The record gives the reactivity of an RNA of 177 nucleotides to 2A3.
Values cover nucleotides 27 to 126.
Conditions: 150 mM KOAc, 10 mM MgCl2 and 150 mM bicine (pH 8.5), 24 C.
As a SHAPE reagent, 2A3 marks flexible, mostly unpaired nucleotides at the ribose 2'-OH.
The data come from the RNA Mapping Database (RMDB), library OK1LIB.

[RMDB]
RNA sequence: GGGAACGACUCGAGUAGAGUCGAAAAGACGCUGAUGCGAUCGACUGUAAGAUAGAUAUAAUGAGCAGACAGAUACGUACGGCAAGUAUCGUCGCCAGAAAUACAGUCGCAAAUUGCCGUACGAAGACCACCGGAGUGACUUCGGUCACUCCGGUGGAAAAGAAACAACAACAACAAC
Reactivity to 2A3 in 0.01 (KOAc 150mM, MgCl2 10mM, bicine 150mM(pH8.5), 24C), signal-to-noise 1, nucleotides 027 to 126: g000a000c000g020c000u150g130a180u240g010c000g010a000u000c000g000a000c000u060g000u050a070a000g030a220u240a030g060a110u130a070u000a180a270u130g100a020g000c010a040g000a010c010a040g000a060u080a080c050g070u000a000c000g000g000c000a150a000g060u040a080u000c110g000u000c000g000c000c000a030g000a040a020a020u040a000c000a000g000u000c040g000c070a000a190a130u080u000g000c020c010g000u000a020c050g050a100a000g050a050